An RNA of 207 nucleotides, treated with 2A3 and read out base by base. The 2A3 profile rests on 389 reads.
RNA sequence: GGGAACGACUCGAGUAGAGUCGAAAAGAUAAGCAAUCAGUGUUAGUUACACUUGAGGCAGUAUCUCUGGUGGUCUGUUCCAGAACUAUGUCCUUGACUCUGUCACAUUCAUACUUUUCAUCACUACUUUUUAUACUUCUGCAAUUUAGGUCACCCACCCCGCACUCAUAUUCGUAUGAGUGCGGGGAAAAGAAACAACAACAACAAC
Reactivity to 2A3 in 0.01 (KOAc 150mM, MgCl2 10mM, bicine 150mM(pH8.5), 24C), signal-to-noise 1, nucleotides 027 to 156: g020a000u160a000a150g000c040a050a160u110c090a000g010u000g000u140u120a060g000u180u160a050c020a060c040u080u160g020a100g130g000c010a000g110u100a110u000c020u000c050u050g000g130u070g000g070u040c050u080g040u130u150c000c000a020g050a010a010c100u100a120u100g040u080c040c020u000u020g030a000c050u010c020u160g000u070c070a070c000a060u020u120c000a010u070a160c030u010u040u050u050c090a090u050c060a000c130u010a010c000u000u000u060u140u260a050u110a000c010u090u060c000u030g010c010a030a070u070u210u120a110g000g000u000c010a010c040c000c080a010